[RMDB]
RNA sequence: GGGAACGACUCGAGUAGAGUCGAAAAGAACGCCAAGAGGCGAGACCGAGACCGAGAAUCACGCUACCUCGGAAAAGUGGAAUAGCGUCAGGAGUCCACUCUCGGAAAAGCCGAAAGAACGGCAGAAACCGACUAUAUCAUUCGUGAUAUAGUCGGUAAAAGAAACAACAACAACAAC
Reactivity to 2A3 in 0.01 (KOAc 150mM, MgCl2 10mM, bicine 150mM(pH8.5), 24C), signal-to-noise 7, nucleotides 027 to 126: g040a050a010c040g000c020c020a120a050g100a120g100g020c020g020a030g070a010c000c010g000a010g010a010c000c000g000a010g020a030a030u130c070a030c090g010c020u030a030c000c000u010c010g000g000a080a170a020a020g010u000g000g050a070a090u150a170g010c010g080u090c100a110g050g210a030g050u000c000c000a010c010u000c000u000c000g010g000a040a080a000a000g000c000c010g020a010a000a010g100a040a010c030g010g000c030a010g140a120a030
Reactivity to DMS in 0.01 (KOAc 150mM, MgCl2 10mM, bicine 150mM(pH8.5), 24C), signal-to-noise 7, nucleotides 027 to 126: g010a120a100c130g010c000c000a130a150g010a300g000g010c000g000a040g000a300c000c000g010a030g010a170c000c010g000a010g000a060a050u020c140a090c050g020c040u000a180c150c000u000c000g000g000a070a070a080a090g020u000g000g000a060a080u040a040g010c020g030u010c260a080g010g010a100g000u000c000c010a000c010u010c000u000c000g010g000a030a080a110a210g010c000c000g000a110a090a100g000a130a110c100g000g000c010a070g000a070a110